Annotation: Structure probing data (2A3 and DMS) for a 177-nucleotide construct. For 2A3 the reverse transcriptase was SuperScript II with manganese. The reactions ran in a buffer of 150 mM KOAc, 10 mM MgCl2 and 150 mM bicine (pH 8.5), at 24 C. The data come from the RNA Mapping Database (RMDB), library OK1LIB. DMS adducts were read by reverse transcription with MarathonRT. Values cover nucleotides 27 to 126.
[RMDB]
RNA sequence: GGGAACGACUCGAGUAGAGUCGAAAACGCUCACAAUUUUCUAGUUGAGGAACAUCUAGAUGUGGCCGCCCUCCUUUAGCUUGGCCACCAGGGCAUCCACGUCGGCGACGGUGGCGCCGGCCUGGCGGAGUAGGUACUCCUUCGGGAGUACCUACUCAAAAGAAACAACAACAACAAC
Reactivity to 2A3 in 0.01 (KOAc 150mM, MgCl2 10mM, bicine 150mM(pH8.5), 24C), signal-to-noise 4, nucleotides 027 to 126: c040g050c000u050c010a060c040a150a180u110u110u030u030c010u020a030g020u010u070g120a160g150g110a120a060c010a020u020c010u020a000g020a070u040g040u050g050g000c000c010g010c030c000c010u090c020c010u130u170u110a060g030c040u090u150g030g000c010c010a010c020c010a040g000g000g000c010a030u010c010c010a030c010g010u020c020g000g020c020g010a080c030g120g080u050g050g000c000g000c000c000g000g020c000c020u010g010g020c060g080
Reactivity to DMS in 0.01 (KOAc 150mM, MgCl2 10mM, bicine 150mM(pH8.5), 24C), signal-to-noise 2, nucleotides 027 to 126: c130g050c040u020c050a050c060a080a130u030u000u000u030c070u000a030g010u010u000g020a230g010g000a060a130c030a000u020c010u010a060g000a050u000g030u000g000g000c010c070g000c030c000c000u010c050c080u000u020u010a080g030c030u010u030g000g000c030c020a080c120c140a100g010g000g030c130a200u000c000c030a020c140g020u030c010g050g030c070g020a000c040g000g000u030g020g000c230g000c070c040g000g000c030c030u000g020g000c300g000